[RMDB]
RNA sequence: GGGAACGACUCGAGUAGAGUCGAAAAAUUUUAGGGUCUACUACUGGAGGACUAGUCUUAAGACAGUGGGACAAAAGUUCUUGUGAUUUUCACCCCUUAAUCAAUAUGCUCAUGUUGACUACCCAUGUGUAAGGCAGUCAAGAGAAGCAGAGAAGAAAAAUAAUAUCGCAUUCGUGCGAUAUUAUUUAAAAGAAACAACAACAACAAC
Reactivity to DMS in 0.01 (KOAc 150mM, MgCl2 10mM, bicine 150mM(pH8.5), 24C), signal-to-noise 3, nucleotides 027 to 156: a060u010u000u000u000a040g020g000g030u000c030u010a070c040u000a070c040u000g010g010a100g010g000a090c040u000a150g030u000c030u000u000a100a150g020a090c130a090g030u000g010g040g000a090c060a070a090a080a120g010u000u000c020u010u010g010u000g020a170u000u000u010u000c040a110c020c000c000c000u000u000a040a090u000c050a050a130u000a110u000g030c030u000c100a240u020g020u000u000g000a030c000u000a020c020c000c020a130u020g010u000g000u010a090a040g020g010c000a030g010u010c000a010a040g000a120g000a070a080g000c000a050g000a170g010a090a130g020a020a130
Reactivity to 2A3 in 0.01 (KOAc 150mM, MgCl2 10mM, bicine 150mM(pH8.5), 24C), signal-to-noise 4, nucleotides 027 to 156: a000u170u210u100u110a030g020g000g000u020c040u060a050c020u030a020c050u150g070g020a030g010g010a010c010u020a040g020u000c030u070u080a080a060g090a080c050a090g090u110g030g020g000a010c010a030a210a020a030g010u020u000c000u040u070g050u030g080a130u030u060u140u150c040a060c000c030c000c000u020u100a040a020u110c070a050a050u050a040u230g010c010u060c060a050u140g040u140u020g020a010c000u040a050c000c010c020a080u110g060u000g060u180a050a060g010g000c010a010g010u000c000a000a010g040a000g010a100a010g000c020a000g020a030g060a160a020g040a020a160
An RNA of 207 nucleotides, treated with DMS and 2A3 and read out base by base.
The RNA was probed in 150 mM KOAc, 10 mM MgCl2 and 150 mM bicine (pH 8.5) at 24 C.
High DMS reactivity at an A or C suggests that its Watson-Crick edge is free.
Values cover nucleotides 27 to 156.